[RMDB]
RNA sequence: GGGAACGACUCGAGUAGAGUCGAAAACUCGUUCACGGUUAAGUCUGUCUCUGGCAGAGCAGACGGUCAGGAGGAGGAGGUCACCAUCUUCACGAAGCCAAAGCCAAAUUCCGCCUUGUCCUGUAAACCAUUUAAUUAGGUUCGCCUAAUUAAAUGGAAAAGAAACAACAACAACAAC
Reactivity to 2A3 in 0.01 (KOAc 150mM, MgCl2 10mM, bicine 150mM(pH8.5), 24C), signal-to-noise 9, nucleotides 027 to 126: c000u010c010g090u110u080c070a050c100g040g060u070u140a110a030g010u010c020u020g140u110c000u000c010u070g180g020c110a030g010a000g000c000a010g000a010c010g000g010u020c030a030g000g050a020g020g020a040g020g020a030g010g040u050c010a030c070c000a100u040c020u080u080c050a050c090g050a050a000g010c030c020a090a040a000g010c010c000a020a070a090u080u010c010c000g010c020c000u020u050g040u030c000c010u050g070u180a060a060a090
Reactivity to DMS in 0.01 (KOAc 150mM, MgCl2 10mM, bicine 150mM(pH8.5), 24C), signal-to-noise 6, nucleotides 027 to 126: c020u000c020g020u010u010c030a070c060g000g000u020u020a080a110g010u000c010u000g000u030c000u000c020u000g000g030c130a120g000a040g000c000a020g010a020c030g000g020u000c060a070g000g000a080g010g010a070g010g010a100g000g000u000c060a090c080c060a070u010c030u010u020c070a100c100g010a090a100g020c040c020a030a120a070g000c000c030a040a080a130u020u020c010c040g000c020c000u000u010g000u000c010c010u000g010u010a070a080a160